[RMDB]
Chemical mapping of a 177-nucleotide RNA with DMS. Reactivities are rounded to 0.1 and cut off at 0 and 3. In probing experiments dimethyl sulfate is read out at A N1 and C N3, which are open when not base-paired.
RNA sequence: GGGAACGACUCGAGUAGAGUCGAAAAGAAUGGCGAAAGCGAGGAGCUCCGGGUGGAUAUUUUUUCCCUGAACGUUCCGCAGGAAGCUUCCUUCGCGGGACCUGCACCGUGUUGGAUGCAAAAAGAAUCUCAAAUUCAAGUUCGCUUGAAUUUGAGAAAAAGAAACAACAACAACAAC
Reactivity to DMS in 0.01 (KOAc 150mM, MgCl2 10mM, bicine 150mM(pH8.5), 24C), signal-to-noise 1, nucleotides 027 to 126: g020a120a130u010g000g050c090g000a100a120a280g020c020g020a080g000g000a170g020c010u000c050c030g010g020g050u000g000g000a010u000a010u000u030u010u000u030u000c030c040c050u010g010a030a100c090g000u000u000c010c000g030c030a080g010g000a030a110g020c030u000u000c000c010u000u000c040g030c010g030g000g000a080c010c070u000g020c030a060c010c010g030u010g000u000u010g010g000a080u000g020c040a060a050a030a090a050g000a110a190